[RMDB]
RNA sequence: GGGAACGACUCGAGUAGAGUCGAAAAGAACAUGCGUUCGCGCAUGUUCAAAUAAAAUCAGCGGUAAUCGAGGCGUAAAUAUUACCGCUGAACGCCUCGAUUAAAGAGCUGGCUUCGGCCAGCUCAAGUAUAGAUUGAACUUCGGUUCAAUCUAUACAAAAGAAACAACAACAACAAC
Reactivity to DMS in 0.01 (KOAc 150mM, MgCl2 10mM, bicine 150mM(pH8.5), 24C), signal-to-noise 3, nucleotides 027 to 126: g000a000a020c000a000u000g010c000g030u010u010c190g010c000g020c000a010u010g000u000u000c020a020a100a070u010a050a070a110a060u000c070a060g010c050g010g000u010a020a010u000c070g010a050g010g010c040g010u000a050a080a130u010a100u000u020a080c050c050g030c040u010g000a040a030c050g000c010c000u000c040g010a060u010u010a040a100a120g000a010g000c000u000g000g000c010u000u020c210g040g000c000c000a010g010c000u000c000a000a060
Reactivity to 2A3 in 0.01 (KOAc 150mM, MgCl2 10mM, bicine 150mM(pH8.5), 24C), signal-to-noise 3, nucleotides 027 to 126: g010a000a000c000a000u000g020c010g010u020u080c210g040c000g000c100a000u000g000u010u000c000a000a010a000u050a010a020a010a070u100c030a010g060c030g090g030u050a010a010u010c020g000a030g020g020c030g020u040a010a130a040u240a080u150u110a060c020c030g010c020u010g010a010a000c010g000c000c000u000c010g010a000u030u090a130a180a010g000a010g010c010u000g000g020c010u030u050c200g100g010c000c000a000g000c000u010c000a000a000